[RMDB]
RNA sequence: GGGAACGACUCGAGUAGAGUCGAAAACUAUAUGAAUCACUAUCGAUCUGUCUUGCAAGAAUACAUGGGUAGUGAGGAUGAAAGUGAGAACUCCCACUAAUUGACUGAGGUUCUCAAAGUGGGGGAAUAAGGGAGGAGACCACCCCUCAUAUUGUCACGCAGUAAUAUGCUUCGGCAUAUUACUGCGAAAAGAAACAACAACAACAAC
Reactivity to 2A3 in 0.01 (KOAc 150mM, MgCl2 10mM, bicine 150mM(pH8.5), 24C), signal-to-noise 2, nucleotides 027 to 156: c070u070a040u000a090u300g030a060a030u000c000a000c000u000a000u030c030g190a080u050c050u090g070u010c010u140u170g090c100a110a070g090a210a080u080a100c030a080u180g080g000g000u050a070g000u000g000a000g000g010a050u120g100a010a120a030g070u080g030a040g000a030a040c000u000c000c010c010a010c000u040a060a080u100u040g030a050c040u200g050a010g200g000u160u020c040u000c010a000a030a000g050u000g000g000g020g020g050a000a050u100a040a030g010g130g010a080g000g020a030g020a070c020c030a000c010c000c030c000u000c000a180u200a190u050u110g010u020c000a020